[RMDB]
RNA sequence: GGGAACGACUCGAGUAGAGUCGAAAAGCACCGAGGCCACCCGCGUCAAGGACGAGGCCCGCGCAGUGAUGGCCGAACUCGGCAUCGACCUCUCCGAGCACACGUCCAAAACGCUGCACGACGUGCCAACAACAUAUACGUUCGCGUAUAUGUUGUUAAAAGAAACAACAACAACAAC
Reactivity to DMS in 0.01 (KOAc 150mM, MgCl2 10mM, bicine 150mM(pH8.5), 24C), signal-to-noise 9, nucleotides 027 to 126: g020c070a060c040c040g020a190g000g010c030c110a090c070c030c080g010c040g000u000c070a120a230g010g010a060c050g020a140g010g020c020c020c040g010c120g010c110a040g010u010g000a100u000g010g000c010c020g010a090a090c160u000c030g010g000c160a100u000c030g000a050c050c030u000c030u000c050c010g000a040g010c060a120c120a080c030g010u000c010c040a050a090a110a070c070g020c030u000g010c050a090c080g000a190c200g000u000g010c070c180
Reactivity to 2A3 in 0.01 (KOAc 150mM, MgCl2 10mM, bicine 150mM(pH8.5), 24C), signal-to-noise 8, nucleotides 027 to 126: g030c020a020c040c030g030a080g040g000c030c040a060c030c060c020g000c010g030u040c070a080a120g030g010a030c030g060a050g060g000c000c000c010g000c010g000c030a020g000u030g110a120u080g140g000c010c010g020a140a090c070u060c100g020g000c030a060u060c040g100a100c010c020u040c000u000c020c010g000a010g000c050a030c000a010c130g010u000c000c000a010a020a040a040c050g010c060u090g000c070a060c080g110a020c040g020u030g020c020c000